[RMDB]
Conditions: 150 mM KOAc, 10 mM MgCl2 and 150 mM bicine (pH 8.5), 24 C. Structure probing data (DMS and 2A3) for a 177-nucleotide construct. High 2A3 reactivity points to a flexible backbone, as in loops and unpaired stretches. 2A3 adducts were read by reverse transcription with SuperScript II with manganese. DMS adducts were read by reverse transcription with MarathonRT.
RNA sequence: GGGAACGACUCGAGUAGAGUCGAAAAAACAAUGCAGUUGUGGCAAAACCGUAGUAAGGCCUAGAGCAACCACACAAUUGUGCAUUGAGUCAACACAUGUAAAUUGGGAUGAUUUAGGACCAGCAUACACUCCUGAUCCAUUCGUGGAUCAGGAGUGAAAAGAAACAACAACAACAAC
Reactivity to DMS in 0.01 (KOAc 150mM, MgCl2 10mM, bicine 150mM(pH8.5), 24C), signal-to-noise 2, nucleotides 027 to 126: a030a090c040a010a000u000g030c040a040g030u000u000g040u000g040g010c090a030a110a060a100c160c080g030u010a080g020u000a060a080g000g000c050c050u000a120g000a120g000c070a020a040c040c080a130c050a110c140a060a050u010u020g020u000g000c010a070u000u000g020a080g000u020c070a080a070c100a030c100a060u000g010u000a040a060a060u000u000g040g010g020a100u000g030a040u000u000u050a030g000g000a060c060c010a070g000c090a110u010a120
Reactivity to 2A3 in 0.01 (KOAc 150mM, MgCl2 10mM, bicine 150mM(pH8.5), 24C), signal-to-noise 1, nucleotides 027 to 126: a000a000c030a010a010u020g000c030a030g020u030u020g030u010g080g000c000a000a000a030a130c030c050g010u080a010g110u060a100a150g050g000c000c000u010a040g000a020g100c020a040a030c010c040a030c000a010c010a060a040u080u130g100u090g120c050a000u050u120g040a060g110u030c050a010a160c060a020c000a070u070g070u180a040a090a090u110u050g070g000g000a080u090g030a040u080u010u160a060g010g040a100c000c000a000g010c010a060u090a160